[RMDB]
RNA sequence: GGGAACGACUCGAGUAGAGUCGAAAAUAGCCGUUAUGCGCGAAGCGGUGUAGCGUCACUUUGAUGGCGGUACUAUGAAUUGAUGCAAGGGGUGGAGCGACCUUAAACAGUUCUGGUGGUGCUCUGAAAAACAAAUAGGCGUUCGCGCCUAUUUGAACCAAUACAUGUAGUUCGCUACAUGUAUUGGAAAAGAAACAACAACAACAAC
Reactivity to DMS in 0.01 (KOAc 150mM, MgCl2 10mM, bicine 150mM(pH8.5), 24C), signal-to-noise 3, nucleotides 027 to 156: u010a110g030c020c020g000u000u000a050u010g010c050g000c050g010a090a100g010c000g010g020u000g000u000a040g000c020g030u010c020a040c080u000u000u000g010a110u000g010g020c020g010g030u000a070c050u000a110u020g040a090a120u000u010g020a110u010g020c040a070a100g000g000g010g030u000g010g020a110g020c060g020a080c030c040u000u000a060a110a100c070a110g010u000u000c030u000g020g010u000g000g000u000g000c010u000c040u010g000a060a060a090a080a170c000a000a010a040u010a020g010g020c010g040u000u000c300g010c040g030c000c000u000a010u010u010u000g010a050a170
Reactivity to 2A3 in 0.01 (KOAc 150mM, MgCl2 10mM, bicine 150mM(pH8.5), 24C), signal-to-noise 9, nucleotides 027 to 156: u090a000g010c010c000g030u060u050a100u190g070c070g000c030g050a030a010g020c030g010g020u050g020u050a030g090c010g020u020c020a030c090u190u170u230g170a250u110g070g000c030g020g040u030a030c030u040a050u160g050a070a050u070u050g040a030u080g040c040a040a040g010g000g000g010u040g010g020a020g010c030g020a040c000c000u060u080a090a110a030c020a040g020u070u030c020u060g030g010u030g010g000u020g010c010u000c020u060g050a070a040a010a010a010c000a000a010a000u000a000g000g000c010g020u030u060c220g010c000g000c030c000u000a000u000u000u000g000a010a000